[RMDB]
RNA sequence: GGGAACGACUCGAGUAGAGUCGAAAAUUGCCGAUCGGUAUGGAUGCCACCGUGACGGCUCAAUCACACAAGUGCCAACGAUAACGAGGCGCUCGCUAUUGCUGCGUAACUGACGGCCUGACGGUAUAAAACAGAUUCGUGUUCGCACGAAUCUGAACGAAUGCACGAGGUUCGCCUCGUGCAUUCGAAAAGAAACAACAACAACAAC
Reactivity to 2A3 in 0.01 (KOAc 150mM, MgCl2 10mM, bicine 150mM(pH8.5), 24C), signal-to-noise 2, nucleotides 027 to 156: u070u080g050c000c030g040a110u100c040g000g010u070a070u150g110g020a040u030g120c070c040a050c010c010g000u050g110a120c030g020g000c020u000c050a050a140u060c020a020c010a000c000a060a020g020u000g050c000c000a120a020c110g030a040u040a170a030c010g010a030g170g000c070g050c120u060c020g040c060u020a050u090u080g000c030u010g010c000g050u050a110a010c020u010g010a020c020g000g010c020c000u020g010a010c010g040g040u010a010u060a130a060a010a020c010a000g000a000u000u000c000g000u000g080u100u090c190g000c060a000c020g000a000a000u000c000u000g000a020a000